This 207-nucleotide RNA was probed chemically with 2A3. The data come from the RNA Mapping Database (RMDB), library OK3TST. The reactions ran in a buffer of 150 mM KOAc, 10 mM MgCl2 and 150 mM bicine (pH 8.5), at 24 C.
RNA sequence: GGGAACGACUCGAGUAGAGUCGAAAACAGCACUCUGGGAGGCUGAGGCAGGCAGAUCGCUUGAGCUCAGGAGUUCGAGACCAGCCUGGGCAACAUGCAUGGCAAAACCCCAUCUCUACAAAAAUAUAAAAAUUAGCUGAGUGUGGUGGUACACGCCUAUGGCAAGGAAGUUCGCUUCCUUGCCAUAAAAAGAAACAACAACAACAAC
Reactivity to 2A3 in 0.01 (KOAc 150mM, MgCl2 10mM, bicine 150mM(pH8.5), 24C), signal-to-noise 1, nucleotides 027 to 156: c020a010g050c000a000c070u030c040u070g000g080g000a020g060g000c020u070g030a040g000g050c070a030g010g000c010a000g010a300u140c060g090c070u040u060g040a030g000c010u020c050a120g000g010a120g030u020u020c070g090a050g040a140c010c030a020g000c000c000u010g020g020g050c010a010a010c000a050u080g050c070a060u050g070g020c000a000a000a110a090c000c020c060c000a020u060c000u020c010u070a130c100a020a180a020a010a020u240a040u200a110a020a060a110a000u190u120a010g020c070u030g000a020g010u140g000u050g000g020u110g060g000u050a020c070a010c120g010c070c000